[RMDB]
RNA sequence: GGGAACGACUCGAGUAGAGUCGAAAAGCAGUUGCAGGAUGACCGGCUGAUCCUUGCCGAGCAGGUCGCCGUUCGCGAUGCGAAACAGCAGCGAGUAAGCGAUCUGACCUGCGGCGCCGGUGACGGAGCCCAGGUGGUGCUUCGGCACCACCUGGGCAAAAGAAACAACAACAACAAC
Reactivity to DMS in 0.01 (KOAc 150mM, MgCl2 10mM, bicine 150mM(pH8.5), 24C), signal-to-noise 1, nucleotides 027 to 126: g000c080a090g030u000u000g000c040a110g000g000a180u010g000a140c040c010g000g000c030u000g010a070u000c070c050u010u010g030c000c020g020a080g020c000a010g020g030u000c000g000c000c020g010u020u000c000g020c010g000a180u030g020c000g000a270a120a180c140a200g050c010a100g020c000g000a000g000u000a080a080g000c010g000a010u000c040u000g000a090c050c010u010g000c080g000g000c050g020c040c010g000g000u000g010a110c070g000g000a210

Source: RMDB library OK2TRN, as collected in RNAgym. Structure probing data (DMS) for a 177-nucleotide construct.